[RMDB]
RNA sequence: GGGAACGACUCGAGUAGAGUCGAAAAGAUAUGGACUGAGCAACAGCCCAUGUUUCGGAAACGAAAUUUGGGACAUGCUUUGUCCUAAGUCAAAAGAGAAGACAAGGGUUCGCCCUUGUCUUCUCAAGGUACUAAUCGGGUUCGCCCGAUUAGUACCAAAAGAAACAACAACAACAAC
Reactivity to DMS in 0.01 (KOAc 150mM, MgCl2 10mM, bicine 150mM(pH8.5), 24C), signal-to-noise 1, nucleotides 027 to 126: g010a010u000a240u010g000g000a010c000u010g010a000g010c050a030a030c210a120g000c010c000c000a000u000g000u000u000u000c000g010g000a080a070a110c030g010a020a020a010u000u000u020g000g000g010a160c030a150u000g010c050u010u010u000g010u000c000c000u000a010a080g000u020c020a080a070a160a130g000a000g000a010a030g000a010c000a010a010g000g010g030u000u010c270g030c000c000c000u000u000g010u000c000u000u000c000u000c000a020a030
Reactivity to 2A3 in 0.01 (KOAc 150mM, MgCl2 10mM, bicine 150mM(pH8.5), 24C), signal-to-noise 1, nucleotides 027 to 126: g030a000u050a020u030g000g000a000c030u030g010a000g020c020a000a150c050a290g060c020c000c000a000u000g020u000u020u010c010g000g020a060a030a000c000g000a000a020a010u010u000u000g020g020g120a150c020a040u030g000c000u000u010u010g010u000c000c000u000a020a010g020u030c020a020a020a120a170g030a000g030a010a010g010a010c010a010a020g000g070g030u090u170c270g140c000c010c000u000u010g000u000c000u000u000c000u010c000a010a000